Source: RMDB libraries RFM100 and RFMREP, as collected in RNAgym.
Chemical mapping of a 177-nucleotide RNA with 2A3 and DMS.
2A3 adducts were read by reverse transcription with SuperScript II with manganese.
The reactions ran in a buffer of 150 mM KOAc, 10 mM MgCl2 and 150 mM bicine (pH 8.5), at 24 C.
RNA sequence: GGGAACGACUCGAGUAGAGUCGAAAAAAUUGCAUCAUACGUCACGGUAGGUUUCGUCUUGCUGUGCGUACGUUGCACACCAAUUAUAGUGGAGCUUUUUGGUUAAGUACUUCCCCCUUGCGAGCAAUGUCACUUCAUAAUUCGUUAUGAAGUGACAAAAAGAAACAACAACAACAAC
Reactivity to 2A3 in 0.01 (KOAc 150mM, MgCl2 10mM, bicine 150mM(pH8.5), 24C), signal-to-noise 8, nucleotides 027 to 126: a000a010u170u070g000c000a000u010c000a020u010a020c010g050u030c290a000c000g020g000u030a000g020g030u070u300u270c170g080u050c010u010u010g000c000u000g000u000g000c000g000u000a010c010g010u000u010g000c000a010c000a010c020c000a040a030u160u050a100u090a100g080u070g150g060a050g030c020u050u070u010u060u040g050g000u060u090a060a050g020u030a110c040u000u010c000c000c000c000c020u020u060g030c040g050a050g040c040a050a070
Reactivity to DMS in 0.01 (KOAc 150mM, MgCl2 10mM, bicine 150mM(pH8.5), 24C), signal-to-noise 7, nucleotides 027 to 126: a060a070u030u000g010c000a010u000c010a060u000a010c000g000u030c010a000c010g020g010u000a010g000g010u000u030u040c180g010u020c000u010u000g020c000u000g010u010g010c000g000u000a000c080g010u000u010g000c010a070c300a100c030c010a050a040u010u010a070u020a080g030u010g010g010a100g010c100u000u000u000u010u000g000g000u000u010a040a070g010u010a060c120u000u000c020c000c000c080c080u010u010g010c050g000a080g000c140a080a110